[RMDB]
RNA sequence: GGGAACGACUCGAGUAGAGUCGAAAAGCCCACCGGGAAGGAGACGGUGAUGCGGUCGGUGGUGUUGCAGUAGUGGACGACAGGGCAGGGGGCUUGCUUGGCCUUGCGCUCCCGCAGCGUCUUCACCAGUAAGUCCAGGUUUCGACCUGGACUUACUAAAAGAAACAACAACAACAAC
Reactivity to DMS in 0.01 (KOAc 150mM, MgCl2 10mM, bicine 150mM(pH8.5), 24C), signal-to-noise 1, nucleotides 027 to 126: g020c020c000c010a170c130c060g010g010g000a120a060g030g000a090g000a040c060g010g000u010g000a050u000g040c020g010g020u010c060g020g030u000g010g030u010g020u000u000g000c080a070g020u010a080g070u010g000g000a080c060g020a080c060a060g010g010g010c050a130g030g010g010g010g010c080u010u010g010c090u000u000g000g020c030c040u000u010g010c080g000c040u000c010c010c020g000c100a080g010c060g010u010c020u000u000c050a090c150c120
Source: RMDB library OK2TST, as collected in RNAgym. Chemical mapping of a 177-nucleotide RNA with DMS. For DMS the reverse transcriptase was MarathonRT. For DMS, 1,817 sequencing reads were counted.